[RMDB]
RNA sequence: GGGAACGACUCGAGUAGAGUCGAAAAUUCAAGUGGUCUAACAGAAUCCGUAUUUCCAAUCUUUCCUGAUAUAGUCAUUAGUCUUUCUGUUAGUUUUUUUCGAGUUAAUUGAGGUAAACUAUGAUUCGUUUGCUGUGGGAUUCGUCCCACAGCAAACAAAAGAAACAACAACAACAAC
Reactivity to 2A3 in 0.01 (KOAc 150mM, MgCl2 10mM, bicine 150mM(pH8.5), 24C), signal-to-noise 2, nucleotides 027 to 126: u070u090c110a090a000g040u020g070g060u020c040u010a090a100c040a120g090a090a020u030c060c070g030u120a180u000u010u020c010c000a010a300u000c140u070u060u040c040c040u090g060a010u010a060u020a300g080u020c090a080u150u000a010g020u000c110u010u020u000c000u020g070u040u050a030g000u160u000u000u000u000u000u130c080g010a110g040u120u070a120a140u010u110g050a020g090g050u130a100a000a000c030u000a000u180g060a040u060u030c010